Background:
Chemical mapping of a 177-nucleotide RNA with 2A3. The RNA was probed in 150 mM KOAc, 10 mM MgCl2 and 150 mM bicine (pH 8.5) at 24 C. For 2A3 the reverse transcriptase was SuperScript II with manganese. Reactivities are rounded to 0.1 and cut off at 0 and 3. The data come from the RNA Mapping Database (RMDB), library OK1LIB. Reactivities are given for positions 27 through 126.

[RMDB]
RNA sequence: GGGAACGACUCGAGUAGAGUCGAAAAAGCGGCACUAUGAAAUGUGACACCGUACGAUUAUUGUCUACGGUACACUAGUUAUUAGAUAAUUAUUGCCUGAUUGAUGAACUGAUACAAUGCAUAGUGAUACCUCCUGCUCCUUCGGGAGCAGGAGGUAAAAAGAAACAACAACAACAAC
Reactivity to 2A3 in 0.01 (KOAc 150mM, MgCl2 10mM, bicine 150mM(pH8.5), 24C), signal-to-noise 1, nucleotides 027 to 126: a000g020c040g060g000c010a010c000u040a000u000g010a000a060a120u130g090u000g000a060c000a000c050c000g000u000a000c160g010a000u040u170a110u300u300g070u000c000u000a000c000g020g010u000a000c000a000c000u070a010g150u050u070a000u050u080a060g000a010u120a300a000u020u090a070u030u200g130c000c100u010g040a050u000u090g000a020u000g000a010a000c000u000g000a020u000a000c000a300a000u120g080c000a000u000a000g000u030g000a000